[RMDB]
RNA sequence: GGGAACGACUCGAGUAGAGUCGAAAAUCAAACAAAUGUAAAUGCUAGUGAGAUUAUAAUCCUAGUCUUGUUAUACGAGACUGCUUUAUGGUCUUGCGAGACCCUCAAACUGCGGGAAAGUCUUAAAAACACGCUACACUAAGCUAUGUUUCGAAAGGUAACAGACGAUGUUCGCAUCGUCUGUUACAAAAGAAACAACAACAACAAC
Reactivity to 2A3 in 0.01 (KOAc 150mM, MgCl2 10mM, bicine 150mM(pH8.5), 24C), signal-to-noise 1, nucleotides 027 to 156: u050c010a020a000a030c000a040a070a000u190g040u110a100a020a050u080g040c000u010a020g000u010g080a000g000a000u000u040a040u070a080a010u090c050c110u050a000g030u000c000u000u050g070u210u150a180u020a230c000g000a000g000a030c000u000g070c020u100u010u010a060u140g000g000u000c000u010u000g000c010g040a000g020a050c020c020c000u000c020a160a180a250c130u040g040c070g040g010g000a060a110a050g030u060c070u060u130a190a170a010a040a020c090a090c010g070c050u200a010c090a080c100u060a220a000g030c020u080a070u150g020u000u000u010c010g040a010a030a020g270